RNA sequence: GGGAACGACUCGAGUAGAGUCGAAAACUGCUCUCUUCGUGGCUCUCGCAACCUCUUCUGCAGAUGCUUCAAGCCUUCUGCACCAGAGAAGGGAUGCAGGAUUUGUGGCCUCGGGGGCCGGCAGAUCCUUGUGAUACACGUUCGCGUGUAUCACAAGAAAAGAAACAACAACAACAAC
Reactivity to 2A3 in 0.01 (KOAc 150mM, MgCl2 10mM, bicine 150mM(pH8.5), 24C), signal-to-noise 2, nucleotides 027 to 126: c000u010g000c000u000c000u000c000u100u130c020g010u030g030g000c010u000c020u010c090g020c040a040a090c000c020u070c010u120u000c020u060g000c010a010g000a030u000g030c000u170u220c140a170a040g000c000c010u040u000c010u010g000c000a050c050c110a060g070a010g010a120a030g000g030g000a020u030g000c030a040g030g020a020u090u080u180g180u110g020g000c000c000u000c040g030g020g000g000g050c000c000g050g010c000a010g020a070u060c000
Reactivity to DMS in 0.01 (KOAc 150mM, MgCl2 10mM, bicine 150mM(pH8.5), 24C), signal-to-noise 3, nucleotides 027 to 126: c030u000g000c020u000c090u020c020u010u000c040g030u000g010g020c030u010c050u000c110g000c060a060a110c040c010u000c010u000u000c030u000g010c010a020g010a030u000g000c020u000u000c280a120a120g010c060c070u000u000c000u000g020c000a080c110c090a100g010a080g000a080a050g010g000g010a120u000g010c030a070g020g000a150u000u010u000g020u010g000g010c010c010u000c070g010g000g000g010g000c170c110g000g040c010a030g000a090u000c020
Structure probing data (2A3 and DMS) for a 177-nucleotide construct. Reactivities are given for positions 27 through 126. Values are in units of 0.01, from 0 to 300, in steps of 10. For DMS the reverse transcriptase was MarathonRT. It was measured as part of the RMDB library OK2TRN. For 2A3 the reverse transcriptase was SuperScript II with manganese.